This 207-nucleotide RNA was probed chemically with 2A3. The data come from the RNA Mapping Database (RMDB), library OK3TST.
[RMDB]
RNA sequence: GGGAACGACUCGAGUAGAGUCGAAAACAUGGUAUGGCCUCGCAUCCGGCCUACCCACAGAAUCAACAACUUGGGAUGCGGUGGGCGAGAGCCCUAAGAAGGAGUCUCCACGCCUGGGGAGCUCCGUAUGACUUAAUGUAUUACCAGGCGAAUACAACCUAUGACCGUAGUUCGCUACGGUCAUAGGAAAAGAAACAACAACAACAAC
Reactivity to 2A3 in 0.01 (KOAc 150mM, MgCl2 10mM, bicine 150mM(pH8.5), 24C), signal-to-noise 2, nucleotides 027 to 156: c050a030u080g030g000u130a100u300g010g000c000c010u030c030g020c010a030u000c000c000g000g010c000c000u010a000c000c040c000a130c040a050g180a020a130u190c060a060a150c000a060a100c200u110u060g060g040g000a010u000g000c010g000g010u090g000g000g000c050g030a090g010a040g090c000c000c000u010a000a010g080a040a070g000g010a000g040u060c000u040c010c000a070c000g010c000c010u020g010g000g010g000a000g000c000u010c020c010g000u030a070u120g090a020c010u060u140a060a090u130g080u200a170u100u090a040c000c000a000g000g000c000g000a000a000u050a010c030a020a030
Conditions: 150 mM KOAc, 10 mM MgCl2 and 150 mM bicine (pH 8.5), 24 C. 2A3 adducts were read by reverse transcription with SuperScript II with manganese.